RNA sequence: GGGAACGACUCGAGUAGAGUCGAAAAAAGUUUUGUCCGUCGCACUCUGAAUGUGCCGUUUGAAGGUAAAACUGCGCCAAAUCAGUGGAUUGUGGUAGAUAUCGCCAACGAUCCGUUAAGUACGCCGACGAAUUGGCCAAUUCGUUGGCCAAUUCGUAAAAGAAACAACAACAACAAC
Reactivity to DMS in 0.01 (KOAc 150mM, MgCl2 10mM, bicine 150mM(pH8.5), 24C), signal-to-noise 2, nucleotides 027 to 126: a040a050g010u000u000u020u000g000u000c010c030g000u020c090g020c050a010c010u010c300u000g030a060a110u020g020u010g020c060c090g010u000u010u010g030a160a100g000g020u000a000a030a020a010c000u000g000c130g030c020c020a140a090a120u020c080a070g000u010g010g000a030u000u000g060u010g000g000u000a060g000a120u010a150u020c150g020c000c000a040a050c050g020a020u000c000c000g000u000u000a050a080g000u000a070c150g000c050c130g000